[RMDB]
Description
Source: RMDB library OK2TRN, as collected in RNAgym. Chemical mapping of a 177-nucleotide RNA with DMS and 2A3.

RNA sequence: GGGAACGACUCGAGUAGAGUCGAAAAUGGAUCGUACGUACGAGCAUGUAGGAUCUCAUGCGCUACAUCUCUAGAGUACUGAGACACUGACAGCACAUGGUACCUAGGUACCUAGCCAUGCACAUGCCCAGAGGAGUCACUUCGGUGACUCCUCUGGAAAAGAAACAACAACAACAAC
Reactivity to DMS in 0.01 (KOAc 150mM, MgCl2 10mM, bicine 150mM(pH8.5), 24C), signal-to-noise 1, nucleotides 027 to 126: u000g010g000a150u000c020g000u030a000c010g010u000a050c300g000a040g000c230a020u000g010u010a010g000g000a150u000c200u000c190a080u030g010c090g050c000u010a000c010a010u000c010u010c030u000a060g020a230g060u000a020c110u000g000a080g010a180c040a050c140u000g010a020c150a080g000c010a070c070a070u000g030g040u010a000c010c040u010a040g000g000u000a010c000c030u000a010g010c040c080a100u000g000c050a130c110a190u000g000c060
Reactivity to 2A3 in 0.01 (KOAc 150mM, MgCl2 10mM, bicine 150mM(pH8.5), 24C), signal-to-noise 2, nucleotides 027 to 126: u120g010g020a000u010c020g020u050a020c030g020u080a030c080g010a010g000c080a070u000g000u000a030g000g110a130u070c060u090c130a100u290g000c080g040c010u010a010c000a030u000c000u000c000u060a000g020a010g180u040a080c120u160g050a020g010a030c040a010c040u100g050a020c060a080g000c020a030c020a110u080g010g000u040a040c000c010u060a220g070g070u060a020c000c000u010a070g000c050c010a100u090g000c060a050c000a080u060g070c010
DMS adducts were read by reverse transcription with MarathonRT. The reactions ran in a buffer of 150 mM KOAc, 10 mM MgCl2 and 150 mM bicine (pH 8.5), at 24 C. The DMS profile rests on 641 reads.